[RMDB]
RNA sequence: GGGAACGACUCGAGUAGAGUCGAAAAGAUGAGGUUAAGAACUAGAGAGAACUAGAGACGCGUGAUGAUGCUCAAGAGAAAACGCGAGAAUGAGCAAGUGUGCUAGACGAAGCACACAAGAGGAAGACACGACUAGCCAUUUCGAUGGCUAGUCGUGAAAAGAAACAACAACAACAAC
Reactivity to 2A3 in 0.01 (KOAc 150mM, MgCl2 10mM, bicine 150mM(pH8.5), 24C), signal-to-noise 1, nucleotides 027 to 126: g060a090u030g000a020g040g020u100u200a050a000g030a140a020c020u030a000g040a010g000a000g000a140a100c040u000a040g000a030g000a090c030g000c000g000u060g030a190u030g030a020u030g030c070u010c070a020a020g100a000g000a260a090a000a050c020g000c000g060a000g060a000a050u010g000a030g000c080a150a100g000u000g030u000g040c000u010a000g010a080c040g010a060a070g020c000a000c000a000c010a000a000g000a030g050g060a030a000g000a050
Reactivity to DMS in 0.01 (KOAc 150mM, MgCl2 10mM, bicine 150mM(pH8.5), 24C), signal-to-noise 2, nucleotides 027 to 126: g000a190u000g000a090g000g000u000u020a080a060g030a080a030c180u040a060g000a110g040a060g040a060a190c110u000a020g000a130g040a190c100g000c050g090u040g020a140u010g000a070u010g000c000u000c090a040a230g020a160g020a160a040a110a000c110g000c040g000a040g060a080a120u000g020a000g000c040a140a150g020u000g010u000g010c000u010a030g000a160c280g020a140a010g000c000a000c000a000c000a010a020g000a130g000g000a040a140g020a230